Conditions: 150 mM KOAc, 10 mM MgCl2 and 150 mM bicine (pH 8.5), 24 C. Chemical mapping of a 207-nucleotide RNA with 2A3. 2A3 adducts were read by reverse transcription with SuperScript II with manganese. For 2A3, 487 sequencing reads were counted. Source: RMDB library OK3TST, as collected in RNAgym.

[RMDB]
RNA sequence: GGGAACGACUCGAGUAGAGUCGAAAAUGCACGGAAAUGCUGACCUUGGAGCCAAGACAACUGGGCUAAAGCCUUGUCACCACUGGGUAGCUGGGAGGAUAUCGGCAGGCUAGUUCCUGCAUUAAGAAAAUGAGGAUAGUAAUUUCCACCUUACAGGUAACUACCCGUGGUUCGCCACGGGUAGUUAAAAAGAAACAACAACAACAAC
Reactivity to 2A3 in 0.01 (KOAc 150mM, MgCl2 10mM, bicine 150mM(pH8.5), 24C), signal-to-noise 1, nucleotides 027 to 156: u100g030c020a020c080g120g010a110a000a000u150g010c000u000g040a040c000c000u020u050g100g000a010g120c090c000a020a050g040a090c040a060a060c180u070g020g000g090c020u080a150a000a000g020c040c080u010u010g010u000c110a050c060c020a070c070u100g010g000g010u040a020g000c010u030g000g060g000a160g010g000a060u060a000u160c050g060g000c010a000g000g050c000u000a070g100u150u140c000c000u000g040c010a010u060u170a130a110g080a070a060a000a000u130g010a060g000g010a010u070a080g070u050a090a150u030u170u060c030c090a010c050c010u090u040a130c090a130g130g000